[RMDB]
RNA sequence: GGGAACGACUCGAGUAGAGUCGAAAAGAGUACUAUUCUGACUCGUACCAUGUUGCUCGGAGCGGGAUUGAGAAGUUGCUUCGGUUGAGGAGUGUGUUCUACGACGACGCAGAGAUUGUGUCUCUGAGAUUCCAUGCCAUUUCGAUGGCAUGGAAUCAAAAGAAACAACAACAACAAC
Reactivity to DMS in 0.01 (KOAc 150mM, MgCl2 10mM, bicine 150mM(pH8.5), 24C), signal-to-noise 1, nucleotides 027 to 126: g000a050g010u000a150c020u000a010u000u010c050u000g010a040c040u000c000g020u020a300c010c030a060u020g000u010u000g000c020u000c040g000g000a070g010c050g000g070g020a180u000u000g000a130g000a030a090g010u000u020g070c050u020u020c000g000g060u060u000g000a060g000g000a140g020u000g060u020g000u000u000c070u000a100c060g010a050c090g000a290c040g050c000a080g000a110g060a110u010u050g050u030g000u000c020u010c030u000g000a300
Reactivity to 2A3 in 0.01 (KOAc 150mM, MgCl2 10mM, bicine 150mM(pH8.5), 24C), signal-to-noise 2, nucleotides 027 to 126: g000a000g040u140a070c030u080a140u120u010c070u080g020a030c000u000c000g020u020a030c110c000a070u220g080u030u160g010c030u030c050g000g000a050g070c020g000g160g030a120u000u080g090a060g010a080a090g060u090u090g000c040u050u140c090g090g000u090u080g010a060g020g010a100g000u240g000u050g000u170u000c000u000a040c080g000a000c070g010a000c020g000c110a070g000a000g020a120u070u170g000u020g050u030c000u030c000u000g020a030
Overview
An RNA of 177 nucleotides, treated with DMS and 2A3 and read out base by base. For 2A3, 518 sequencing reads were counted. Source: RMDB library OK1LIB, as collected in RNAgym. Conditions: 150 mM KOAc, 10 mM MgCl2 and 150 mM bicine (pH 8.5), 24 C. DMS adducts were read by reverse transcription with MarathonRT. 2A3 adducts were read by reverse transcription with SuperScript II with manganese. The DMS profile rests on 1,751 reads.